This 207-nucleotide RNA was probed chemically with DMS and 2A3. As a SHAPE reagent, 2A3 marks flexible, mostly unpaired nucleotides at the ribose 2'-OH. For DMS, 4,455 sequencing reads were counted. 2A3 adducts were read by reverse transcription with SuperScript II with manganese.

[RMDB]
RNA sequence: GGGAACGACUCGAGUAGAGUCGAAAAAUAGUCAUGGCGACUAAAUUAGAUUAUGAGGAUGCUGUUUUUUACUUUGUGGAUGAUGAUAAAAUAUGUAGUCGUGACUCCAUCAUCGAUCUAAUAGAUGAAUAUAUUACGUGGAGAAAUCAUGUUAUAGCAUGCUAUGGAUGUUCGCAUCCAUAGCAUGAAAAGAAACAACAACAACAAC
Reactivity to DMS in 0.01 (KOAc 150mM, MgCl2 10mM, bicine 150mM(pH8.5), 24C), signal-to-noise 2, nucleotides 027 to 156: a150u010a070g000u000c030a110u010g030g030c090g020a070c020u020a050a090a120u000u000a120g010a100u000u000a100u010g020a120g010g000a070u000g010c020u000g010u010u030u000u000u010u000a050c050u010u000u010g000u010g030g020a060u000g010a050u010g010a090u010a040a020a070a090u010a060u020g030u000a040g000u000c030g000u000g010a090c010u000c030c040a090u010c000a040u000c000g010a070u000c070u000a050a150u000a120g000a050u000g010a060a100u000a100u010a100u000u000a020c070g020u000g010g010a130g020a050a070a060u010c030a080u000g020u010u000a110u010a130g020
Reactivity to 2A3 in 0.01 (KOAc 150mM, MgCl2 10mM, bicine 150mM(pH8.5), 24C), signal-to-noise 4, nucleotides 027 to 156: a000u050a000g010u000c020a030u050g180g020c060g000a020c030u070a010a070a110u120u120a050g050a060u070u100a060u150g030a030g030g010a030u040g000c020u000g040u020u000u000u000u010u100a110c060u070u080u120g030u040g020g040a030u040g000a010u000g040a030u100a100a080a050a040u200a090u190g050u060a020g020u040c040g000u030g040a040c010u000c010c000a020u040c000a000u020c010g070a040u030c030u140a070a060u020a190g030a030u020g020a030a000u100a010u030a040u120u150a010c050g010u020g010g030a020g080a030a060a020u090c030a030u040g030u080u070a060u040a050g080